The record gives the reactivity of an RNA of 207 nucleotides to 2A3.
Conditions: 150 mM KOAc, 10 mM MgCl2 and 150 mM bicine (pH 8.5), 24 C.
The 2A3 profile rests on 614 reads.
It was measured as part of the RMDB library OK3TST.
2A3 adducts were read by reverse transcription with SuperScript II with manganese.
[RMDB]
RNA sequence: GGGAACGACUCGAGUAGAGUCGAAAAAAAGGGAAAGCUAUGCAUGCAAUGCUACAACCACAUGGGGCAAGGGAUCCACCAUGCCACAUCAUCUGUCUUGACUUCACUACUAGCUAAGCUGAUAGAGGACCUCCUGGUGAGCUUCAUAGAACAGGAACGCAGUAUUUUACUUCGGUAAAAUACUGCGAAAAGAAACAACAACAACAAC
Reactivity to 2A3 in 0.01 (KOAc 150mM, MgCl2 10mM, bicine 150mM(pH8.5), 24C), signal-to-noise 1, nucleotides 027 to 156: a000a000a000g090g030g010a200a090a000g020c010u020a000u070g010c010a020u010g000c030a050a150u050g000c000u030a020c070a180a010c030c020a070c040a060u040g000g090g000g000c030a060a060g060g040g000a060u120c090c040a020c060c010a070u020g000c010c000a030c020a060u070c010a010u000c030u020g060u030c010u030u100g030a140c050u040u020c030a030c060u090a020c020u040a080g030c040u090a070a000g000c040u070g010a100u040a100g050a030g000g040a010c000c020u110c020c030u050g010g030u070g040a030g070c000u070u040c050a050u080a070g030a060a060c050a020g120g030a000a020